An RNA of 177 nucleotides, treated with DMS and 2A3 and read out base by base. For 2A3 the reverse transcriptase was SuperScript II with manganese. Values cover nucleotides 27 to 126. Values are in units of 0.01, from 0 to 300, in steps of 10. DMS (dimethyl sulfate) methylates the pairing face of unpaired adenines and cytosines. The 2A3 profile rests on 2,009 reads. Conditions: 150 mM KOAc, 10 mM MgCl2 and 150 mM bicine (pH 8.5), 24 C.
[RMDB]
RNA sequence: GGGAACGACUCGAGUAGAGUCGAAAAGAAUCCUCGUCGGCUUUUGUUUCCAGCUUGGAGCCGUCUCCCCUUAUAUAUACUGAUUUCGAUCUGUAUUUUGCUGGACGACAACGAGGAUACAAUUAGAGGGUUCCGUUUAGUUCGCUGAACGGAACCCAAAAGAAACAACAACAACAAC
Reactivity to DMS in 0.01 (KOAc 150mM, MgCl2 10mM, bicine 150mM(pH8.5), 24C), signal-to-noise 2, nucleotides 027 to 126: g000a100a040u010c000c000u000c010g020u010c030g000g010c160u000u040u030u030g020u040u030u010c000c000a010g000c010u010u010g010g000a050g000c030c000g020u010c080u030c010c000c010c220u060u050a030u030a080u040a100u000a070c040u000g000a030u000u000u070c190g000a000u000c000u000g000u000a000u010u010u010u020g000c020u000g000g000a050c040g000a040c040a070a010c000g000a010g000g020a010u000a010c130a040a130u010u020a100g010a300
Reactivity to 2A3 in 0.01 (KOAc 150mM, MgCl2 10mM, bicine 150mM(pH8.5), 24C), signal-to-noise 4, nucleotides 027 to 126: g050a020a020u000c010c000u010c000g010u000c010g120g070c100u100u140u070u250g060u060u110u020c000c000a010g010c040u070u170g050g010a000g030c030c000g090u010c090u020c000c000c010c010u220u050a080u010a020u010a010u000a190c040u080g030a030u110u030u050c160g150a050u010c000u020g020u060a090u020u170u100u070g000c000u000g000g000a020c040g000a010c000a010a010c020g010a000g000g010a000u000a050c040a000a110u180u160a060g060a100